[RMDB]
RNA sequence: GGGAACGACUCGAGUAGAGUCGAAAAGCCUUACGAUUCGUCGUAAGGCAUACAAAGUUUUGGCACUAUGAGCCCGCAGCGUUCGUGCUCCCACGCGGUGCAAUACGACGGAUUUCGAUCCGUCGAAUCUACGGUCUAGCUUCGGCUAGACCGUAGAAAAAGAAACAACAACAACAAC
Reactivity to 2A3 in 0.01 (KOAc 150mM, MgCl2 10mM, bicine 150mM(pH8.5), 24C), signal-to-noise 1, nucleotides 027 to 126: g010c000c000u010u000a010c000g020a030u030u060c110g030u000c000g010u160a000a000g000g030c000a000u010a000c000a000a120a030g040u030u060u120u230g050g000c030a000c020u170a030u250g040a030g000c000c000c000g050c010a060g090c080g070u100u080c050g050u140g060c010u000c060c070c030a050c050g070c030g020g000u090g000c050a060a030u110a130c030g000a010c020g010g010a020u070u040u120c170g060a000u000c000c000g010u020c000g000a000a010
Reactivity to DMS in 0.01 (KOAc 150mM, MgCl2 10mM, bicine 150mM(pH8.5), 24C), signal-to-noise 1, nucleotides 027 to 126: g000c000c000u000u040a000c000g000a030u000u000c230g040u000c010g010u000a000a000g020g010c030a000u000a000c180a080a140a140g010u000u000u000u000g000g010c010a080c100u000a140u000g000a110g010c010c000c140g000c100a160g020c100g010u000u010c060g000u000g000c040u000c020c020c000a120c160g010c050g000g000u010g040c060a070a000u020a210c020g010a000c000g010g000a000u000u000u000c180g000a050u000c000c000g040u000c020g010a050a020